[RMDB]
RNA sequence: GGGAACGACUCGAGUAGAGUCGAAAAUCUCGACUGAGAAGCUCUGAGACUCUGACUGAUCAGAGAGCUGACUGACUAGCUAGUCCUCUUCUCAGUCAGGAUCCUAGCUAGGAAGCUUCCUAGGACUCUAGCUAGAGCUGAGACUCUGAUCGAUCAGAUCUACAGUGGGUUUCGACCCACUGUAGAUAAAAGAAACAACAACAACAAC
Reactivity to 2A3 in 0.01 (KOAc 150mM, MgCl2 10mM, bicine 150mM(pH8.5), 24C), signal-to-noise 2, nucleotides 027 to 156: u000c000u000c040g010a000c000u000g000a000g010a000a020g030c040u020c090u240g140a090g040a140c030u050c040u050g050a080c050u080g000a060u020c000a040g020a020g040a100g090c030u020g030a060c030u010g020a020c000u030a040g020c010u020a010g030u010c010c030u040c040u050u000c010u010c000a000g010u000c010a000g010g010a020u030c000c010u020a010g000c000u020a030g000g070a100a040g070c050u130u110c030c040u040a050g070g060a130c040u010c040u140a020g000c020u020a020g010a040g060c030u040g020a010g020a090c020u020c020u030g030a050u030c010g030a040u030c040a000g060
Reactivity to DMS in 0.01 (KOAc 150mM, MgCl2 10mM, bicine 150mM(pH8.5), 24C), signal-to-noise 1, nucleotides 027 to 156: u000c040u010c010g020a110c050u010g020a110g010a090a090g020c170u000c020u030g020a190g010a090c040u000c020u000g010a050c020u010g020a070u010c010a090g010a030g000a110g000c030u000g010a170c030u000g020a160c070u010a050g020c050u000a080g030u000c020c020u010c010u000u000c000u000c020a010g020u000c000a000g020g010a070u020c080c000u000a040g020c010u000a020g000g010a150a110g020c100u000u010c030c020u000a120g020g000a070c030u000c010u000a120g010c080u000a140g010a100g020c030u000g000a250g010a250c010u020c030u000g000a030u010c020g050a080u000c040a120g010
Chemical mapping of a 207-nucleotide RNA with 2A3 and DMS. For DMS the reverse transcriptase was MarathonRT. For DMS, 2,087 sequencing reads were counted. The data come from the RNA Mapping Database (RMDB), library OK3TST. 2A3 adducts were read by reverse transcription with SuperScript II with manganese.